[RMDB]
RNA sequence: GGGAACGACUCGAGUAGAGUCGAAAAACGAUGUCGUUCGCGACAUCGUAAAUUGUAUAACCUUGCUUGAAGUCUACUUGGUUGUAAAGCGAGUCAAGUCAGUGAGAGUCCUAUUCGUAGGACUCAAUAGGUGCACUAUAUUCGUAUAGUGCACCUAAAAAGAAACAACAACAACAAC
Reactivity to 2A3 in 0.01 (KOAc 150mM, MgCl2 10mM, bicine 150mM(pH8.5), 24C), signal-to-noise 2, nucleotides 027 to 126: a000c000g000a000u010g010u020c020g000u050u070c120g030c000g100a000c010a000u000c000g000u000a000a010a030u080u050g170u020a120u020a180a060c000c010u030u010g040c020u060u030g050a110a030g060u050c000u030a100c080u170u120g090g040u030u070g090u130a040a070a000g040c030g010a000g020u010c020a060a020g040u070c040a040g060u030g230a120g000a000g090u000c010c010u010a030u050u050c100g040u020a000g000g000a000c010u000c000a000a010
Reactivity to DMS in 0.01 (KOAc 150mM, MgCl2 10mM, bicine 150mM(pH8.5), 24C), signal-to-noise 4, nucleotides 027 to 126: a030c010g000a000u000g020u000c000g020u000u010c240g020c020g020a010c000a000u000c000g010u000a000a040a060u000u010g010u010a090u000a100a180c090c010u000u000g000c020u000u000g010a050a080g010u000c010u010a060c040u000u000g010g010u010u000g010u010a060a040a050g010c300g000a040g000u000c020a030a050g010u000c050a080g000u010g000a160g000a010g000u000c000c000u000a020u000u010c190g030u000a000g010g000a010c000u000c000a020a090
This 177-nucleotide RNA was probed chemically with 2A3 and DMS. The DMS profile rests on 5,012 reads. Conditions: 150 mM KOAc, 10 mM MgCl2 and 150 mM bicine (pH 8.5), 24 C. It was measured as part of the RMDB library M2PK50.